[RMDB]
Chemical mapping of a 207-nucleotide RNA with 2A3 and DMS. It was measured as part of the RMDB library OK3TST. Values cover nucleotides 27 to 156. For DMS, 6,963 sequencing reads were counted. For 2A3, 3,549 sequencing reads were counted.

RNA sequence: GGGAACGACUCGAGUAGAGUCGAAAAGUACAUUGAGGUAUUGCAUUUGACUCAAGGGACCUGCUGGGAACAGAUGUACACUCCAGGCGGAGAAGUGAGAAAUGACGAUGUUGACCAGAGUUUGAUCAUCGCUGCCAGAAACAUUGUUAGGAGAGCACUGAUAGCUCUUAUUCGUAAGAGCUAUCAGAAAAGAAACAACAACAACAAC
Reactivity to 2A3 in 0.01 (KOAc 150mM, MgCl2 10mM, bicine 150mM(pH8.5), 24C), signal-to-noise 5, nucleotides 027 to 156: g050u050a020c030a110u070u110g040a000g030g070u130a060u090u110g020c040a070u050u050u150g070a050c010u010c080a060a070g040g000g030a070c020c020u070g000c040u050g030g000g040a060a020c000a030g050a070u060g030u060a010c000a000c030u030c000c010a040g100g010c070g020g030a070g020a090a060g040u110g050a060g040a050a100a040u090g020a030c030g030a040u060g010u080u050g040a030c030c010a020g010a020g050u020u100u130g040a040u080c030a010u010c040g000c050u060g000c020c010a040g050a020a090a020c040a020u030u080g020u030u040a040g000g030a050g000a020g020c050a010
Reactivity to DMS in 0.01 (KOAc 150mM, MgCl2 10mM, bicine 150mM(pH8.5), 24C), signal-to-noise 3, nucleotides 027 to 156: g040u000a070c020a110u010u010g010a120g010g000u000a050u000u000g040c090a160u010u010u010g010a090c030u000c020a080a110g020g000g010a100c040c030u010g030c020u000g020g010g020a070a210c060a090g000a070u010g020u000a110c030a070c030u010c030c020a100g020g020c070g030g010a120g020a040a050g030u000g020a130g000a060a080a100u000g010a060c010g010a070u000g010u000u000g000a080c050c020a090g020a130g010u000u000u000g010a060u010c020a030u010c040g000c050u010g000c010c000a080g000a130a040a110c060a020u000u010g000u000u010a090g020g010a100g020a090g030c080a230